[RMDB]
RNA sequence: GGGAACGACUCGAGUAGAGUCGAAAAGGAUCUGAGUACUUAUAAGUGCGAAGUGAGUGAGGGUCUUACGAGCACGAAUUACAACCCUCUAUUAAGUAUCGAAGAUCGGCCGGAGAUCGAGAUACGACUAUUAUCCGGCGACUGUACGAAGAUCCGAACCUACGAUAUCGUUCGCGAUAUCGUAGGUAAAAGAAACAACAACAACAAC
Reactivity to DMS in 0.01 (KOAc 150mM, MgCl2 10mM, bicine 150mM(pH8.5), 24C), signal-to-noise 2, nucleotides 027 to 156: g040g020a010u000c010u010g080a300g000u000a040c020u000u000a080u010a100a140g000u000g020c000g000a130a160g050u000g020a100g010u020g000a050g000g020g020u010c010u000u000a050c030g000a300g010c020a020c020g080a060a090u000u000a040c080a060a100c040c000c010u000c020u000a180u000u000a080a150g000u000a010u010c000g000a150a210g000a080u000c010g020g030c010c020g000g000a090g010a020u000c010g000a300g000a120u000a080c010g040a100c080u010a110u010u000a120u000c030c000g030g000c000g000a120c060u020g060u000a010c010g000a230a110g000a060u000c030c000g000a100
Reactivity to 2A3 in 0.01 (KOAc 150mM, MgCl2 10mM, bicine 150mM(pH8.5), 24C), signal-to-noise 5, nucleotides 027 to 156: g000g000a000u020c000u030g020a010g020u010a010c020u080u120a160u100a300a040g000u010g000c000g030a110a010g010u000g000a010g000u100g000a010g000g000g020u100c000u010u010a000c010g000a020g000c000a010c040g070a120a090u190u090a080c060a040a040c010c020c000u010c020u030a150u130u130a100a020g010u010a000u010c000g040a090a010g000a030u000c020g080g000c000c000g000g000a010g000a010u010c030g010a010g000a130u010a000c010g010a000c010u070a080u300u070a050u020c010c000g000g000c020g070a130c140u070g000u010a000c000g000a000a010g000a010u010c000c000g010a000

This 207-nucleotide RNA was probed chemically with DMS and 2A3.
The RNA was probed in 150 mM KOAc, 10 mM MgCl2 and 150 mM bicine (pH 8.5) at 24 C.
The data come from the RNA Mapping Database (RMDB), library OK3TST.
2A3 adducts were read by reverse transcription with SuperScript II with manganese.